[RMDB]
RNA sequence: GGGAACGACUCGAGUAGAGUCGAAAAUGCACCAGCCCCACAGAGGCGUGAUCGAAGUGGUUUAUUUGCGAACACCCUUCUCAGCCGGCAACGCCACCACAUAAAUCCUUAUUUACGCCAGCGCGGGACUUUACACGCUUUUCGAAGCGUGUAAAGUAAAAGAAACAACAACAACAAC
Reactivity to DMS in 0.01 (KOAc 150mM, MgCl2 10mM, bicine 150mM(pH8.5), 24C), signal-to-noise 3, nucleotides 027 to 126: u020g010c100a110c030c030a110g020c080c030c000c040a130c150a120g000a160g000g030c060g040u000g010a040u010c130g020a040a080g020u000g020g010u000u010u010a090u010u010u010g030c060g010a050a070c070a070c020c010c000u000u000c030u000c060a120g000c020c020g030g010c050a050a060c090g010c040c070a040c020c010a060c060a060u000a040a070a070u010c030c010u000u010a120u010u000u010a080c070g010c000c010a100g010c090g040c020g010g000g020
Reactivity to 2A3 in 0.01 (KOAc 150mM, MgCl2 10mM, bicine 150mM(pH8.5), 24C), signal-to-noise 1, nucleotides 027 to 126: u120g000c030a040c030c000a050g060c000c000c000c000a090c020a010g130a040g020g000c050g050u040g030a040u130c120g080a050a020g050u140g100g020u000u100u120a100u040u220u120g100c010g040a040a000c050a070c060c000c000u050u000c060u000c020a040g030c030c040g010g000c040a080a030c010g000c000c020a030c000c000a050c010a010u160a080a080a050u060c000c000u120u130a140u100u130u050a040c050g020c030c000a030g000c020g020c050g060g000g000